An RNA of 177 nucleotides, treated with 2A3 and DMS and read out base by base.

RNA sequence: GGGAACGACUCGAGUAGAGUCGAAAAUGUAUGGCAGCAUCCCCGGGACGGUGCAUGUGCCGACGGAUCAGCUGCCGGCAGCACUGAGCAUGGCGCCGAGGGAGUGGGAGGCGGCCUACCGCUGCCCACCUCUGUGGUAGUUCGCUACCACAGAGGUAAAAGAAACAACAACAACAAC
Reactivity to 2A3 in 0.01 (KOAc 150mM, MgCl2 10mM, bicine 150mM(pH8.5), 24C), signal-to-noise 4, nucleotides 027 to 126: u110g010u050a120u190g010g000c000a000g000c000a040u010c000c020c000c010g020g020g100a050c010g000g050u100g050c090a080u130g030u060g080c000c000g010a020c010g010g000a090u150c120a070g120c040u060g020c020c010g000g000c000a020g010c000a020c100u120g030a050g060c040a040u060g190g000c020g000c020c020g020a090g050g070g010a170g020u250g010g000g010a010g000g050c010g020g020c010c010u050a070c010c050g030c050u050g000c020c000c000
Reactivity to DMS in 0.01 (KOAc 150mM, MgCl2 10mM, bicine 150mM(pH8.5), 24C), signal-to-noise 4, nucleotides 027 to 126: u010g010u000a070u010g020g010c000a020g020c010a150u000c030c010c020c010g010g010g010a060c000g040g020u000g020c160a080u010g020u010g000c000c010g030a050c130g000g000a130u010c180a140g020c050u000g010c000c000g000g000c030a060g010c090a100c130u010g010a120g030c050a060u010g010g010c030g010c040c030g010a150g010g010g010a080g010u010g000g010g000a150g010g010c000g000g010c060c080u000a040c040c040g000c030u010g010c000c020c040
The data come from the RNA Mapping Database (RMDB), library OK2TRN.